Notes
Structure probing data (2A3) for a 177-nucleotide construct. The 2A3 profile rests on 735 reads. The RNA was probed in 150 mM KOAc, 10 mM MgCl2 and 150 mM bicine (pH 8.5) at 24 C.

[RMDB]
RNA sequence: GGGAACGACUCGAGUAGAGUCGAAAAUAUCAUUGUAGAAGUCAAAACAAUCCAAAAGAAACCGUCAAAUAGUGAUUCGGGUGGCACUUUUAUUUUCCAUAAAUAAUCGUGUCUAUCGAAUUUCUAACCUCCUUACGACAUUCGUGUCGUAAGGAGGAAAAGAAACAACAACAACAAC
Reactivity to 2A3 in 0.01 (KOAc 150mM, MgCl2 10mM, bicine 150mM(pH8.5), 24C), signal-to-noise 2, nucleotides 027 to 126: u100a020u020c000a000u000u030g010u040a050g030a250a060g230u170c140a020a050a130a070c050a000a080u070c000c080a100a050a000a000g060a130a100a000c030c030g110u110c050a000a130a070u050a020g060u000g040a000u010u000c000g000g030g000u010g010g000c010a000c000u080u050u000u010a030u050u010u040u090c100c080a180u300a050a010a000u000a000a030u000c030g000u020g000u030c000u050a000u000c000g020a000a010u010u000u000c020u090a070a110